[RMDB]
RNA sequence: GGGAACGACUCGAGUAGAGUCGAAAACAGAACUAAUUCGUUAGUUCUGGCAUAUAACCUUCACCAAUUAGGUUCUAAUAAGUGGUAAAAAUAAAAAUAAAACGGGGUCUGCAUUCGUGCAGACCAACUCACAAUAGCAAUUCGUUGCUAUUGUGAGAAAAGAAACAACAACAACAAC
Reactivity to DMS in 0.01 (KOAc 150mM, MgCl2 10mM, bicine 150mM(pH8.5), 24C), signal-to-noise 2, nucleotides 027 to 126: c000a020g010a010a020c000u000a000a020u000u010c140g010u000u000a010g040u030u000c010u000g000g000c170a120u010a140u010a150a080c000c010u010u010c060a020c000c040a030a080u010u000a020g010g000u000u010c140u020a050a040u000a030a020g060u000g000g020u010a000a040a070a060a090u020a020a080a080a100a090u010a040a020a080a090c210g010g010g000g000u000c000u000g030c000a070u020u010c150g020u000g010c000a010g010a000c020c000a010a000
Reactivity to 2A3 in 0.01 (KOAc 150mM, MgCl2 10mM, bicine 150mM(pH8.5), 24C), signal-to-noise 3, nucleotides 027 to 126: c000a000g010a000a000c000u000a000a000u080u160c150g060u040u010a000g000u000u000c000u000g010g000c050a160u300a020u030a110a040c000c000u000u020c050a010c040c000a010a030u040u040a090g020g020u170u130c060u070a120a150u050a170a050g020u010g010g020u020a020a110a010a000a020u180a040a130a020a030a050u180a030a070a070a020c060g300g000g000g000u010c000u010g000c010a010u050u090c150g070u010g000c000a010g000a000c000c000a010a000